[RMDB]
RNA sequence: GGGAACGACUCGAGUAGAGUCGAAAAAAAAAAAGAUAUGGACGUGUUGUAAGCGCACAGGCGAAUACAUCGGAAACGAUGUAGGAGCCUGUGAACUACGCUUACACCACGUCCUAAGUCAAAAAAACUAACAUGAUCUCUUCGGAGAUCAUGUUAGAAAAGAAACAACAACAACAAC
Reactivity to DMS in 0.01 (KOAc 150mM, MgCl2 10mM, bicine 150mM(pH8.5), 24C), signal-to-noise 1, nucleotides 027 to 126: a030a000a000a150a030a080a270g000a000u000a300u030g010g000a000c000g050u000g010u010u010g000u000a000a040g000c000g000c000a010c010a000g010g000c000g000a300a220u020a010c000a000u000c000g000g000a120a100a140c000g000a000u000g010u000a000g010g010a300g000c000c010u000g000u000g000a000a060c170u000a290c000g000c000u000u000a000c020a010c000c000a000c000g020u000c000c000u010a000a010g000u040c000a000a020a120a100a000a030a120